[RMDB]
RNA sequence: GGGAACGACUCGAGUAGAGUCGAAAAGCGAAGAACUGCCUGGGCGAGUACAUCGCGCUGGAGGCGCUGGAGGCGGUCUACUCUGGCAACGAACUGCUGCAGCCGAACGGCGUGUGCGUCCUCGUGCGCAGCUGGAGCCGUUCGCGGUUCCAGCUGCAAAAGAAACAACAACAACAAC
Reactivity to 2A3 in 0.01 (KOAc 150mM, MgCl2 10mM, bicine 150mM(pH8.5), 24C), signal-to-noise 9, nucleotides 027 to 126: g050c030g050a080a040g040a140a080c040u090g040c010c010u060g030g050g000c030g010a010g020u060a040c020a100u050c040g000c010g000c040u030g020g060a050g050g020c060g000c040u050g040g050a080g010g060c040g010g010u000c020u070a100c030u040c070u120g100g000c040a050a080c090g070a070a030c030u060g020c020u040g020c010a040g010c020c010g040a100a050c020g010g000c010g010u040g030u040g040c050g010u030c000c020u020c000g030u080g040c050
Reactivity to DMS in 0.01 (KOAc 150mM, MgCl2 10mM, bicine 150mM(pH8.5), 24C), signal-to-noise 4, nucleotides 027 to 126: g010c050g010a130a140g010a070a120c040u010g020c000c000u000g020g000g010c030g000a050g000u040a080c160a060u010c010g010c030g030c010u010g010g010a080g000g020c110g000c020u010g000g030a120g000g000c020g010g000u020c030u020a100c060u010c030u000g000g000c030a050a080c120g030a060a080c050u000g000c020u000g000c050a080g030c030c010g020a060a130c030g000g000c010g010u000g000u010g010c030g000u010c040c030u000c070g010u000g010c150